The record gives the reactivity of an RNA of 177 nucleotides to 2A3 and DMS. The RNA was probed in 150 mM KOAc, 10 mM MgCl2 and 150 mM bicine (pH 8.5) at 24 C.
[RMDB]
RNA sequence: GGGAACGACUCGAGUAGAGUCGAAAAGGGUACAGAGCGUUAAUGCCAGCAGUAAGGCAACAGGCGCGACAUUUCUCAUAGAUUAUCCCUUACAAAAUACGGCAGCGACGACUGUUAUUGCCCCGGACACCCUACAGAACUUCGGUUCUGUAGGGUGAAAAGAAACAACAACAACAAC
Reactivity to 2A3 in 0.01 (KOAc 150mM, MgCl2 10mM, bicine 150mM(pH8.5), 24C), signal-to-noise 4, nucleotides 027 to 126: g020g020g000u030a030c030a030g070a040g150c010g000u030u070a120a030u050g000c000c000a020g040c020a050g070u130a130a030g010g030c050a110a040c030a110g000g070c000g010c010g050a010c010a050u040u090u040c070u020c020a090u170a070g070a030u110u130a100u210c000c000c000u000u000a020c010a020a170a020a030u210a030c050g020g000c020a020g020c020g060a010c010g000a030c060u010g010u070u020a070u100u170g060c000c000c000c010g000g000a000
Reactivity to DMS in 0.01 (KOAc 150mM, MgCl2 10mM, bicine 150mM(pH8.5), 24C), signal-to-noise 3, nucleotides 027 to 126: g000g050g010u000a040c020a060g000a120g000c030g020u000u000a040a230u000g000c000c010a160g000c230a110g020u000a030a040g030g000c170a140a050c110a090g020g010c020g000c050g000a060c060a100u020u000u010c020u000c080a110u050a120g010a090u020u020a120u020c120c000c010u000u000a030c060a060a050a090a080u030a110c100g000g000c000a010g000c240g010a020c060g000a100c030u000g020u010u020a040u040u000g010c040c010c010c090g010g000a290

For DMS the reverse transcriptase was MarathonRT. High DMS reactivity at an A or C suggests that its Watson-Crick edge is free. The data come from the RNA Mapping Database (RMDB), libraries RFM100 and RFMREP.